[RMDB]
Conditions: 150 mM KOAc, 10 mM MgCl2 and 150 mM bicine (pH 8.5), 24 C.
This 207-nucleotide RNA was probed chemically with DMS and 2A3.
For DMS, 3,036 sequencing reads were counted.
2A3 adducts were read by reverse transcription with SuperScript II with manganese.
2A3 is a SHAPE reagent: it acylates the 2'-hydroxyl of flexible nucleotides of all four kinds.
RNA sequence: GGGAACGACUCGAGUAGAGUCGAAAAUGCAGUCGUUCGCGACUGCAAAAAACCGUAGGGUGAAGAAACGAGGUUCAGCAAUGAUGUUCGAAAGAGUUGAGCUGAACUCCCCACCGUUUCCACCCUAAACGGAAAAAGCCCCAGUUCGCUGGGGCAACACACUAAAAGUGUUCGCACUUUUAGUGUGAAAAGAAACAACAACAACAAC
Reactivity to DMS in 0.01 (KOAc 150mM, MgCl2 10mM, bicine 150mM(pH8.5), 24C), signal-to-noise 2, nucleotides 027 to 156: u000g040c000a020g000u000c010g000u010u020c260g080c020g000a000c000u000g080c000a010a050a020a100a030a050c000c010g010u030a030g000g040g040u000g000a110a160g020a060a040a030c030g010a300g000g000u000u000c000a040g000c050a110a070u000g010a080u000g000u010u020c010g010a160a130a200g010a080g010u010u010g000a080g040c000u020g000a040a070c010u000c100c070c050c060a300c210c000g000u020u000u000c000c000a040c010c000c020u000a010a020a050c000g020g000a030a060a070a160a120g010c000c000c000c000a030g010u000u000c250g040c050u000g040g000g040g020c010a000a000
Reactivity to 2A3 in 0.01 (KOAc 150mM, MgCl2 10mM, bicine 150mM(pH8.5), 24C), signal-to-noise 3, nucleotides 027 to 156: u090g000c010a000g000u010c010g050u070u170c230g020c010g100a000c010u000g000c010a080a040a020a010a000a010c010c010g020u040a020g000g000g000u010g030a120a080g010a020a170a000c000g000a010g010g030u000u000c000a010g000c010a080a110u230g050a050u130g180u130u070c070g070a120a080a050g030a040g020u100u080g010a020g020c000u010g000a000a000c010u050c030c010c000c010a020c010c010g010u000u000u020c000c010a020c010c010c000u010a030a070a000c000g000g080a060a090a010a050a000g000c000c010c000c000a000g000u050u070c160g020c060u000g010g010g000g000c000a000a010